[RMDB]
RNA sequence: GGGAACGACUCGAGUAGAGUCGAAAAGCAAUAUAUUAGCAUGGAGACUAGUGAUUACAUCACUUACGACAUAUGCAGAGGCCGUUGAAUGUGCAGGGGUGCAGUGGAAACGCGCGUUUUUGAGAAGCAGAAGCAUACCCUUCGGGGUAUGCUUCUGAAAAGAAACAACAACAACAAC
Reactivity to 2A3 in 0.01 (KOAc 150mM, MgCl2 10mM, bicine 150mM(pH8.5), 24C), signal-to-noise 2, nucleotides 027 to 126: g000c010a160a010u060a000u050a130u300u220a040g030c000a000u000g020g020a090g050a190c000u000a000g020u000g020a040u170u160a160c020a210u000c000a000c010u000u080a090c050g000a020c020a010u020a000u180g030c010a010g000a050g100g000c000c000g010u070u080g110a170a130u160g020u110g000c010a020g000g000g000g070u070g000c040a040g010u010g020g080a020a080a000c010g030c000g000c010g000u000u000u000u020u210g240a240g000a050a050g050
Reactivity to DMS in 0.01 (KOAc 150mM, MgCl2 10mM, bicine 150mM(pH8.5), 24C), signal-to-noise 2, nucleotides 027 to 126: g000c060a100a070u100a030u040a070u010u030a030g020c050a070u050g000g000a120g000a250c160u020a040g000u000g000a010u030u100a180c160a300u000c030a090c000u050u050a120c110g000a290c080a070u000a130u030g000c030a020g010a030g070g020c000c020g050u000u000g030a030a030u000g000u000g010c070a040g000g000g030g000u000g020c100a000g000u000g000g000a020a000a030c070g000c020g000c090g000u000u070u000u000u000g000a140g010a090a170g010